[RMDB]
RNA sequence: GGGAACGACUCGAGUAGAGUCGAAAAAGUAUUUUGUCCAACGCAAUUAAUAUUGAGACUCUAACCUUCAAUAUUAUUAUAGAGAACACAAACUUAAAUAGAUUGGGUGACUUAUUUGUGUCAGUUACCACAGAUGAGUGUUCGCACUCAUCUGUGGAAAAGAAACAACAACAACAAC
Reactivity to DMS in 0.01 (KOAc 150mM, MgCl2 10mM, bicine 150mM(pH8.5), 24C), signal-to-noise 1, nucleotides 027 to 126: a180g030u060a030u000u050u050u000g000u000c080c160a080a070c160g030c140a110a030u010u000a000a000u000a000u000u000g000a050g000a100c130u020c160u040a130a140c140c050u000u050c000a010a000u000a000u000u000a010u030u000a210u000a100g000a080g030a000a030c110a060c290a040a040a030c080u000u050a090a030a080u040a100g030a080u000u000g000g000g010u010g000a000c050u010u000a020u000u140u030g000u030g040u000c000a060g000u050u010a040
Reactivity to 2A3 in 0.01 (KOAc 150mM, MgCl2 10mM, bicine 150mM(pH8.5), 24C), signal-to-noise 3, nucleotides 027 to 126: a000g140u120a070u010u100u120u060g050u080c000c060a120a000c030g040c070a040a080u080u030a000a000u020a020u010u000g000a000g050a070c020u030c030u260a120a200c000c060u100u070c040a050a010u000a020u030u080a020u130u080a120u180a140g110a000g040a190a000c020a030c040a070a270a020c040u070u180a010a160a160u130a130g160a120u130u000g070g010g050u000g000a020c010u080u100a050u080u140u050g130u040g020u060c090a030g070u070u090a110